RNA sequence: GGGAACGACUCGAGUAGAGUCGAAAAUCGUCGUGACAAAAACGGUCAGCGCGUUCAAGAUACUCAAGGGCGGCUUCGCACUGGCGCGAGGGGCGCUCACACCGCUCAUAUCCUCGGUGUGGAGCUUCACGGCGGCGCUGCUGGCCAACCCCGUCACUAGUAGGUUAACUUUCGAGUUAACCUACUAAAAAGAAACAACAACAACAAC
Reactivity to 2A3 in 0.01 (KOAc 150mM, MgCl2 10mM, bicine 150mM(pH8.5), 24C), signal-to-noise 4, nucleotides 027 to 156: u080c020g030u000c010g000u010g000a010c030a020a090a050a060a050c100g010g010u000c000a000g000c010g000c010g040u130u170c070a100a050g050a170u170a220c060u130c200a090a100g060g070g040c060g030g000c010u040u000c000g000c000a020c030u050g090g000c060g030c100g150a020g000g010g010g010c010g010c020u010c010a010c000a000c010c000g030c000u020c040a100u110a080u230c020c010u020c020g000g010u000g000u020g010g000a000g020c010u040u040c060a060c040g070g000c010g000g000c010g020c020u170g000c000u000g000g020c010c000a000a020c000c000c010c020g000u010c000a000c010
Reactivity to DMS in 0.01 (KOAc 150mM, MgCl2 10mM, bicine 150mM(pH8.5), 24C), signal-to-noise 2, nucleotides 027 to 156: u010c050g010u010c040g030u030g000a070c030a050a020a040a070a090c260g040g000u010c000a030g040c020g070c000g030u000u010c110a100a150g010a180u000a080c080u000c070a080a170g030g000g020c070g010g020c060u080u010c030g020c030a040c030u000g030g010c100g020c100g030a070g000g020g030g010c020g010c040u000c210a050c050a100c200c000g030c010u000c030a070u000a100u000c030c030u000c060g000g020u010g020u000g020g000a030g010c020u000u010c030a050c050g030g010c080g000g020c040g010c040u010g050c000u000g000g020c040c020a060a030c020c010c000c080g000u000c010a070c020